[RMDB]
RNA sequence: GGGAACGACUCGAGUAGAGUCGAAAAGAUAGGAUGCCAAAGUGAAUGUCUACAGCUUAUUUCUAAGGUAUCUAAGAGGGAUAGCCAUAUGCAUCACGGUGGUACAAAACAUCAUGUUCAGUACUUUGGAUUACACAUUCAGAGGUCACCUCGUCCAGGCUGAUUUUCUUUUCGAAGAAAAUCAGCCAAAAGAAACAACAACAACAAC
Reactivity to 2A3 in 0.01 (KOAc 150mM, MgCl2 10mM, bicine 150mM(pH8.5), 24C), signal-to-noise 2, nucleotides 027 to 156: g070a020u210a040g110g000a050u070g000c020c000a060a020a000g020u090g030a130a100u040g020u060c090u140a070c020a050g030c020u070u080a000u060u170u000c040u060a090a100g120g010u090a070u030c020u070a090a070g060a000g080g000g000a030u020a030g000c000c000a050u050a020u190g020c000a010u070c010a000c000g060g040u030g010g000u050a040c060a030a090a030a020c000a090u140c030a050u090g050u070u120c110a010g050u050a080c010u100u020u010g020g020a020u000u160a040c100a020c020a060u100u100c020a030g050a030g030g050u070c110a050c040c000u000c020g010u000c010c000a000